Chemical mapping of a 177-nucleotide RNA with 2A3 and DMS.
Values cover nucleotides 27 to 126.
For DMS the reverse transcriptase was MarathonRT.
For 2A3 the reverse transcriptase was SuperScript II with manganese.
RNA sequence: GGGAACGACUCGAGUAGAGUCGAAAAGGAGAUCGAAGACGACCGACGUCAGCACGGUCUGGAUGUAGGUCCGCAUGCAUCCAAGUUGACGAAACUUAACGAUUUCCAAAGCGGACAAGAAGUCAAACCUACGUAAAUAGUUCGCUAUUUACGUAGGAAAAGAAACAACAACAACAAC
Reactivity to 2A3 in 0.01 (KOAc 150mM, MgCl2 10mM, bicine 150mM(pH8.5), 24C), signal-to-noise 9, nucleotides 027 to 126: g020g000a010g000a010u010c010g050a100a060g140a090c090g010a010c000c030g070a080c040g160u220c100a040g060c170a020c030g010g000u010c030u020g000g000a000u000g000u000a000g020g000u000c000c000g000c000a000u000g000c000a000u000c010c000a010a010g000u000u010g060a110c140g060a070a020a010c020u030u020a080a020c010g020a010u000u020u000c010c000a060a100a000g000c000g000g000a010c000a010a070g190a070a010g080u100c080a090a030a040
Reactivity to DMS in 0.01 (KOAc 150mM, MgCl2 10mM, bicine 150mM(pH8.5), 24C), signal-to-noise 5, nucleotides 027 to 126: g030g000a010g000a010u000c000g010a150a110g000a190c210g000a030c010c000g000a140c080g010u020c160a090g010c070a140c020g010g000u010c030u000g020g010a000u010g010u000a010g000g000u000c000c010g000c010a060u010g000c010a010u000c000c010a070a060g000u010u000g010a100c220g010a130a030a000c020u010u000a070a150c020g010a020u010u000u000c000c000a060a100a140g000c010g000g000a010c020a160a070g020a060a090g010u020c090a060a100a140